Notes
Chemical mapping of a 207-nucleotide RNA with DMS and 2A3. The DMS profile rests on 4,162 reads. 2A3 adducts were read by reverse transcription with SuperScript II with manganese. Source: RMDB library RNAMAK, as collected in RNAgym.
RNA sequence: GGGAACGACUCGAGUAGAGUCGAAAAUCCUAAGUCAGGGAGGGAGCCUCCAUUUGAGCAGCUCCGAGCUUAAUCGGAAACGAUUAAGCGUUUGACGAGCUGCGAGGAGGCGAGGAUCUCCCUGAUAUGGAAAAACAACGGACUUCGGUCCGUUGAAACCAAAACUAUACUUCGGUAUAGUUUUGGUAAAAGAAACAACAACAACAAC
Reactivity to DMS in 0.01 (KOAc 150mM, MgCl2 10mM, bicine 150mM(pH8.5), 24C), signal-to-noise 2, nucleotides 027 to 156: u000c000c000u000a090a230g010u000c010a000g010g020g000a030g030g010g010a100g030c010c020u000c010c010a180u000u000u060g010a290g030c000a030g000c000u000c000c020g000a170g020c000u000u010a000a020u010c000g030g000a240a100a240c000g030a030u000u010a010a030g000c000g020u000u020u000g000a140c110g000a020g010c000u000g020c000g010a030g000g000a030g020g000c000g000a030g010g000a070u010c000u000c000c000c010u000g000a000u000a050u020g010g000a050a050a090a130a110c000a020a020c000g010g000a030c000u000u000c300g040g000u010c000c000g000u000u020g000a020a200
Reactivity to 2A3 in 0.01 (KOAc 150mM, MgCl2 10mM, bicine 150mM(pH8.5), 24C), signal-to-noise 2, nucleotides 027 to 156: u040c010c000u030a110a020g010u000c010a010g000g000g000a000g000g020g000a010g010c020c000u000c020c020a080u160u130u160g100a050g000c010a000g000c000u000c010c010g010a000g000c000u000u000a000a000u010c010g050g040a150a030a050c020g010a000u010u010a010a000g000c020g000u070u070u100g040a020c000g000a000g010c000u000g000c010g000a010g000g000a000g000g000c020g000a000g000g000a000u000c000u000c010c010c010u000g000a000u000a010u010g000g020a020a070a040a000a070c000a010a000c000g020g010a000c000u050u100c300g100g000u000c000c000g000u000u000g010a010a020

DMS (dimethyl sulfate) methylates the pairing face of unpaired adenines and cytosines.
Reactivities are rounded to 0.1 and cut off at 0 and 3.